This 177-nucleotide RNA was probed chemically with DMS and 2A3. The data come from the RNA Mapping Database (RMDB), library OK1LIB. For 2A3 the reverse transcriptase was SuperScript II with manganese. The 2A3 profile rests on 520 reads. Reactivities are given for positions 27 through 126.
[RMDB]
RNA sequence: GGGAACGACUCGAGUAGAGUCGAAAAUAGCAGCUUCAUAUGUGUGGGUUGUGCGCUUGUAAGGAUGUAGGUUUAUGUUUGUUUAUGUAUGUGAUGUUGGUUUUUCGGGCGCCGCUGCUGUCAUCACUCAUUAGGGAGGGUUCGCCCUCCCUAAUGAAAAAGAAACAACAACAACAAC
Reactivity to DMS in 0.01 (KOAc 150mM, MgCl2 10mM, bicine 150mM(pH8.5), 24C), signal-to-noise 2, nucleotides 027 to 126: u030a140g000c030a060g000c000u010u010c050a050u020a050u020g020u020g020u010g000g010g020u010u000g010u010g010c030g010c030u000u000g000u040a080a170g000g000a040u010g010u010a080g010g010u000u000u020a060u030g010u000u010u010g000u020u010u010a050u050g010u010a070u020g010u010g010a080u010g010u030u010g010g010u000u000u000u000u010c050g020g000g000c010g000c030c050g000c040u000g010c010u010g010u030c040a040u010c090a080c120
Reactivity to 2A3 in 0.01 (KOAc 150mM, MgCl2 10mM, bicine 150mM(pH8.5), 24C), signal-to-noise 2, nucleotides 027 to 126: u020a000g000c050a000g000c000u060u050c150a060u110a010u170g050u000g060u140g020g080g000u080u070g050u130g080c050g020c070u010u090g120u240a020a020g050g050a080u120g090u070a020g020g070u040u090u090a040u110g050u000u000u000g090u050u150u060a170u050g120u070a080u070g030u020g020a050u020g000u070u020g070g040u080u020u000u060u050c040g010g000g000c050g000c050c000g000c000u040g000c040u000g030u050c000a000u050c000a060c040
The RNA was probed in 150 mM KOAc, 10 mM MgCl2 and 150 mM bicine (pH 8.5) at 24 C.